[RMDB]
RNA sequence: GGGAACGACUCGAGUAGAGUCGAAAAGUAAGGAUGGGCUCUCACACCUCCUGGAGCCAGCACCCUCCAGGAUAUUUCCAUGAGGAAAGGAUGGUGGCAGCCCUAGUGACCCAUGGGACACGGCUGGCACGUUUAGGAACUUCGGUUCCUAAACGUGAAAAGAAACAACAACAACAAC
Reactivity to 2A3 in 0.01 (KOAc 150mM, MgCl2 10mM, bicine 150mM(pH8.5), 24C), signal-to-noise 3, nucleotides 027 to 126: g070u090a040a060g110g030a070u110g010g020g000c000u000c000u000c010a050c000a030c020c010u010c000c000u010g010g010a000g010c020c060a010g030c040a050c010c020c020u000c000c000a000g000g000a010u020a120u130u040u000c030c020a090u300g160a190g100g040a030a000a030g060g020a060u190g110g000u010g020g000c030a010g000c000c000c000u020a030g010u020g060a040c000c000c040a040u100g050g000g010a020c030a010c080g030g000c000u020g030g020
Reactivity to DMS in 0.01 (KOAc 150mM, MgCl2 10mM, bicine 150mM(pH8.5), 24C), signal-to-noise 6, nucleotides 027 to 126: g010u010a100a100g000g000a120u010g010g000g020c010u000c020u000c040a070c020a070c020c010u010c000c000u000g000g010a020g010c050c030a050g000c110a090c100c180c010u000c000c010a020g010g000a050u000a040u000u000u000c000c000a220u020g010a170g020g010a030a020a060g000g020a110u000g020g020u000g000g000c300a030g010c010c000c010u010a060g010u010g010a110c030c010c010a100u010g000g000g010a080c090a070c110g010g000c020u000g000g000

Background
The data come from the RNA Mapping Database (RMDB), library RFMREP. An RNA of 177 nucleotides, treated with 2A3 and DMS and read out base by base. Reactivities are given for positions 27 through 126. The 2A3 profile rests on 6,488 reads. For 2A3 the reverse transcriptase was SuperScript II with manganese.